[RMDB]
RNA sequence: GGGAACGACUCGAGUAGAGUCGAAAACAAAUCUGUUUAAAAAACGAACAAUUGGCACUGGCACUGCGCCAAACCUGACCAAUACUAGAAGUGUUGGCGCGGCGCAUCCCCCCCAGUGGCGCGUCGAUCAGGGGAUUGUUUUCGAACAAUCCCCUGAAAAAGAAACAACAACAACAAC
Reactivity to DMS in 0.01 (KOAc 150mM, MgCl2 10mM, bicine 150mM(pH8.5), 24C), signal-to-noise 2, nucleotides 027 to 126: c080a030a080a020u080c150u000g000u000u000u010a000a040a040a040a070a070c030g030a050a040c090a070a070u070u020g000g000c040a000c000u000g020g030c040a060c070u020g040c020g000c000c010a010a000a010c130c060u000g000a280c110c090a050a080u020a050c120u000a150g000a100a120g000u020g000u000u000g010g000c020g010c060g010g080c040g010c000a000u020c000c000c030c040c060c060c000a040g000u030g000g000c060g040c110g000u000c060g070a140
Reactivity to 2A3 in 0.01 (KOAc 150mM, MgCl2 10mM, bicine 150mM(pH8.5), 24C), signal-to-noise 2, nucleotides 027 to 126: c010a010a040a060u210c110u130g180u100u170u180a050a110a030a000a000a000c060g060a060a010c060a140a230u090u180g080g000c030a000c020u020g020g000c020a020c140u060g000c000g000c000c000a000a070a130c020c030u040g090a110c020c010a060a000u090a020c110u030a060g060a190a020g050u040g000u070u010g010g000c030g000c000g020g000c000g050c020a170u160c070c000c000c000c000c000c000a000g060u060g110g050c030g030c020g060u070c050g000a060
Chemical mapping of a 177-nucleotide RNA with DMS and 2A3. Values cover nucleotides 27 to 126. For 2A3 the reverse transcriptase was SuperScript II with manganese. For 2A3, 633 sequencing reads were counted. The data come from the RNA Mapping Database (RMDB), library RFM100.